[RMDB]
The data come from the RNA Mapping Database (RMDB), library OK2TST. Structure probing data (DMS and 2A3) for a 177-nucleotide construct. The reactions ran in a buffer of 150 mM KOAc, 10 mM MgCl2 and 150 mM bicine (pH 8.5), at 24 C. For DMS the reverse transcriptase was MarathonRT. Values cover nucleotides 27 to 126. The DMS profile rests on 31,583 reads.
RNA sequence: GGGAACGACUCGAGUAGAGUCGAAAAUGCAGAGUAAGUGAAUUAAGCAGCACCCAUUCAUGUGUUCAAAUUCCUGCCAGAGUCAAAAGGUUGUGCUGAAGUAGAGUCCAUGAAAGCAUCGUAGAUGAUUACCUAACACAUUCGUGUGUUAGGUAAUAAAAGAAACAACAACAACAAC
Reactivity to DMS in 0.01 (KOAc 150mM, MgCl2 10mM, bicine 150mM(pH8.5), 24C), signal-to-noise 9, nucleotides 027 to 126: u000g010c030a050g010a080g010u010a090a180g010u000g000a060a060u000u000a100a130g010c110a070g000c040a070c020c040c030a100u010u000c060a050u000g020u000g010u000u000c090a040a070a200u000u000c020c020u000g020c040c050a080g010a080g010u000c070a050a050a100a090g010g010u000u000g010u000g010c030u000g000a040a070g010u000a070g000a090g010u000c030c040a040u000g000a060a070a080g010c040a020u000c060g020u010a080g010a080u000g000
Reactivity to 2A3 in 0.01 (KOAc 150mM, MgCl2 10mM, bicine 150mM(pH8.5), 24C), signal-to-noise 5, nucleotides 027 to 126: u070g000c010a020g010a030g120u120a140a030g030u060g130a070a070u110u080a110a010g000c020a000g020c000a030c000c030c000a010u060u030c040a040u060g060u000g010u060u010c030a040a090a130u060u000c000c010u010g010c020c020a060g020a020g100u100c040a000a060a050a070g060g010u060u060g040u060g040c040u020g000a030a000g000u050a010g000a020g050u000c030c000a030u060g080a060a040a010g030c000a020u070c070g070u050a040g050a110u150g010